Chemical mapping of a 177-nucleotide RNA with 2A3 and DMS. For DMS the reverse transcriptase was MarathonRT.
[RMDB]
RNA sequence: GGGAACGACUCGAGUAGAGUCGAAAAGGGAAACCGGGUAAAGGUCGGAUUCUUUCCGGAGAGUCCCGCUCCUUCAGGUGAACGAUCUCGGUUGUUUCUCUGAAGGCAUGAUCACCCCGUCCGAUGCCGAAACAGUGAUGUUCGCAUCACUGUUUCGAAAAGAAACAACAACAACAAC
Reactivity to 2A3 in 0.01 (KOAc 150mM, MgCl2 10mM, bicine 150mM(pH8.5), 24C), signal-to-noise 6, nucleotides 027 to 126: g040g000g010a060a040a030c020c020g020g010g050u230a080a050a000g050g070u060c060g030g000a030u150u060c000u020u050u010c010c000g010g010a030g000a010g050u020c010c010c000g010c030u010c010c000u000u000c000a030g040g030u080g070a000a000c010g010a010u010c020u040c150g130g000u010u020g010u000u070u010c020u000c000u000g020a000a000g000g000c040a110u120g030a010u060c040a140c000c000c000c010g010u010c000c020g020a050u080g040c030
Reactivity to DMS in 0.01 (KOAc 150mM, MgCl2 10mM, bicine 150mM(pH8.5), 24C), signal-to-noise 3, nucleotides 027 to 126: g000g010g020a100a070a120c070c010g000g030g050u040a070a080a120g010g010u000c160g000g000a040u020u020c050u010u020u000c100c060g010g000a060g010a100g000u000c010c010c090g000c140u000c010c010u020u000c030a020g000g000u050g000a010a070c010g000a010u000c020u060c300g010g020u000u000g000u010u010u000c030u000c000u020g000a030a010g000g000c270a030u010g000a050u010c120a140c060c020c000c090g010u010c020c030g000a060u030g020c120
Conditions: 150 mM KOAc, 10 mM MgCl2 and 150 mM bicine (pH 8.5), 24 C. Source: RMDB libraries RFM100 and RFMREP, as collected in RNAgym.